[RMDB]
RNA sequence: GGGAACGACUCGAGUAGAGUCGAAAAUCCACAGCCUGCAAAGCCUCACUAAACUUUCUGAAACAUUGAAAGAAGUGAAAAAUCACGGCGUUGAGCUAUAACGUUUAGUAGGUUCAUUCUUGAAAAACGGGAGAUAAUUAUUCGUAAUUAUCUCCCGAAAAGAAACAACAACAACAAC
Reactivity to 2A3 in 0.01 (KOAc 150mM, MgCl2 10mM, bicine 150mM(pH8.5), 24C), signal-to-noise 4, nucleotides 027 to 126: u030c010c000a040c000a050g030c000c010u020g010c030a040a050a030g060c000c000u000c000a000c000u040a060a140a060c000u000u010u000c000u010g030a000a020a030c060a110u250u120g000a010a010a000g010a000a010g000u030g100a070a020a000a000a010u210c110a030c110g020g030c000g010u040u110g020a030g000c040u060a050u070a300a020c030g020u010u020u080a060g000u010a020g010g000u010u050c020a060u100u050c030u110u050g050a100a050a000a030a050
Reactivity to DMS in 0.01 (KOAc 150mM, MgCl2 10mM, bicine 150mM(pH8.5), 24C), signal-to-noise 5, nucleotides 027 to 126: u020c000c000a170c220a200g020c030c010u010g010c060a080a050a140g020c090c080u000c010a010c020u010a120a110a080c010u000u000u000c000u000g000a220a280a060c100a120u040u030g000a010a000a000g010a070a020g010u000g000a010a050a040a070a060u030c090a110c180g000g000c020g010u000u020g010a150g010c070u020a110u030a080a060c090g010u000u010u000a080g010u010a040g010g000u000u030c150a100u000u010c030u000u000g000a070a050a040a110a190
Chemical mapping of a 177-nucleotide RNA with 2A3 and DMS. The reactions ran in a buffer of 150 mM KOAc, 10 mM MgCl2 and 150 mM bicine (pH 8.5), at 24 C. 2A3 adducts were read by reverse transcription with SuperScript II with manganese.